[RMDB]
Structure probing data (2A3 and DMS) for a 177-nucleotide construct.
Conditions: 150 mM KOAc, 10 mM MgCl2 and 150 mM bicine (pH 8.5), 24 C.
The data come from the RNA Mapping Database (RMDB), libraries RFM100 and RFMREP.
Values are in units of 0.01, from 0 to 300, in steps of 10.
RNA sequence: GGGAACGACUCGAGUAGAGUCGAAAAGAAACAAAGGUGCCUUUGCCAAUCUUGACAAGCCUUGAGAUUUCUGAGGGGAAUCCACUAUAAAUGGGAUCAGGUCACUUAUUUAUGUUGUGUGCAAAUACUCACUAUAAGCAUUCGUGCUUAUAGUGAGAAAAGAAACAACAACAACAAC
Reactivity to 2A3 in 0.01 (KOAc 150mM, MgCl2 10mM, bicine 150mM(pH8.5), 24C), signal-to-noise 9, nucleotides 027 to 126: g020a000a040a000c060a020a110a020g050g020u050g000c010c010u040u040u090g030c010c020a050a110u060c050u070u080g030a040c060a090a060g040c010c010u150u100g090a110g030a150u030u110u050c050u060g060a090g010g070g000g010a010a050u020c020c020a060c060u140a110u090a200a100a070u140g030g000g020a030u040c030a010g020g040u040c020a010c030u080u130a110u130u250u030a140u130g010u010u010g010u000g010u030g030c020a020a020a040u070a090
Reactivity to DMS in 0.01 (KOAc 150mM, MgCl2 10mM, bicine 150mM(pH8.5), 24C), signal-to-noise 4, nucleotides 027 to 126: g000a060a060a080c090a040a060a050g020g010u000g010c070c020u010u010u020g020c010c040a090a110u020c080u000u000g020a090c080a050a060g010c060c040u010u000g010a130g000a150u000u000u010c030u010g000a100g020g000g000g010a060a080u020c030c020a080c060u010a090u020a070a050a080u010g000g000g000a040u000c060a050g000g010u010c050a030c060u000u010a050u020u040u010a040u010g010u000u010g000u000g000u000g010c130a050a070a070u040a140